[RMDB]
Background
The record gives the reactivity of an RNA of 207 nucleotides to DMS and 2A3. For DMS the reverse transcriptase was MarathonRT. For DMS, 3,556 sequencing reads were counted. High DMS reactivity at an A or C suggests that its Watson-Crick edge is free. The reactions ran in a buffer of 150 mM KOAc, 10 mM MgCl2 and 150 mM bicine (pH 8.5), at 24 C. The data come from the RNA Mapping Database (RMDB), library M2RFPK.
RNA sequence: GGGAACGACUCGAGUAGAGUCGAAAAAUGAGAUCCCAUCUUGCACACUGUGCUAAUUUGAGAUUCUCAUGCCUCCUACUUGGAGAGAUCUGGACUAGAAGUCAGGCCAUCUGACUCUGCCAGCCACAAAACGUACAAGGCUUCGGCCUUGUACGAAGAACAUGCCUAAGUUCGCUUAGGCAUGUUCAAAAGAAACAACAACAACAAC
Reactivity to DMS in 0.01 (KOAc 150mM, MgCl2 10mM, bicine 150mM(pH8.5), 24C), signal-to-noise 2, nucleotides 027 to 156: a050u000g000a000g000a050u000c000c000c010a020u000c080u020u000g030c000a000c000a230c110u000g060u010g000c040u010a020a030u000u020u010g020a020g010a050u000u000c010u000c000a000u010g040c120c020u000c030c020u000a090c080u010u000g010g020a060g030a160g000a110u000c010u010g020g000a130c050u010a030g010a160a090g010u000c010a020g050g030c100c270a170u020c020u000g000a040c020u000c020u010g030c000c010a020g010c030c020a100c100a080a070a080a200c000g010u000a000c010a020a010g010g010c000u000u010c300g060g010c020c010u000u020g000u000a000c020g020a020a020
Reactivity to 2A3 in 0.01 (KOAc 150mM, MgCl2 10mM, bicine 150mM(pH8.5), 24C), signal-to-noise 6, nucleotides 027 to 156: a000u020g000a000g000a010u010c000c000c000a010u010c000u000u030g010c000a020c050a090c190u300g010u010g000c070u110a050a060u020u000u010g040a030g000a010u300u060c000u000c000a010u040g040c000c010u010c010c010u120a270c130u140u190g020g010a030g000a030g030a120u030c000u010g000g040a090c050u120a120g030a140a000g060u000c000a010g060g060c140c050a190u190c050u000g000a000c000u000c000u010g020c000c000a010g030c020c000a090c040a030a110a070a020c010g000u000a000c000a000a000g000g000c000u020u170c200g060g000c000c000u000u000g000u000a000c000g000a000a010